[RMDB]
RNA sequence: GGGAACGACUCGAGUAGAGUCGAAAAGAUGGGGGUGUACUGGUCUCGACAGGGCGGACAAAGGUGCGCAGGCAACUCGUCAGGCGAUCGACGUUAAUGAAGCAAAUCCAUAAUUGCCAAUGAUGAGCAGUUCAAUCCAGUUCGCUGGAUUGAACUGAAAAGAAACAACAACAACAAC
Reactivity to 2A3 in 0.01 (KOAc 150mM, MgCl2 10mM, bicine 150mM(pH8.5), 24C), signal-to-noise 3, nucleotides 027 to 126: g090a040u170g000g010g020g000g000u010g000u030a040c040u040g010g010u030c010u000c030g080a050c010a080g070g000g030c050g050g010a000c050a050a150a010g080g000u020g000c030g000c000a000g040g000c010a010a050c010u010c010g000u010c000a000g010g070c010g060a070u050c020g020a030c000g010u050u120a180a030u190g090a100a000g040c010a040a050a070u020c010c000a040u070a190a090u050u020g010c010c010a030a070u140g050a060u080g010a030g000
Reactivity to DMS in 0.01 (KOAc 150mM, MgCl2 10mM, bicine 150mM(pH8.5), 24C), signal-to-noise 3, nucleotides 027 to 126: g000a050u030g000g040g010g000g010u010g010u030a070c080u010g000g000u010c020u000c040g020a100c120a100g000g010g000c030g000g000a050c080a050a110a050g020g000u000g000c050g000c050a070g000g000c050a070a080c050u000c020g000u000c030a030g010g010c040g000a030u020c040g000a070c060g020u010u020a060a040u010g000a090a170g000c080a090a080a120u010c040c050a110u030a070a070u000u000g010c010c010a030a080u010g010a080u000g000a100g030
Structure probing data (2A3 and DMS) for a 177-nucleotide construct. Reactivities are given for positions 27 through 126. DMS adducts were read by reverse transcription with MarathonRT.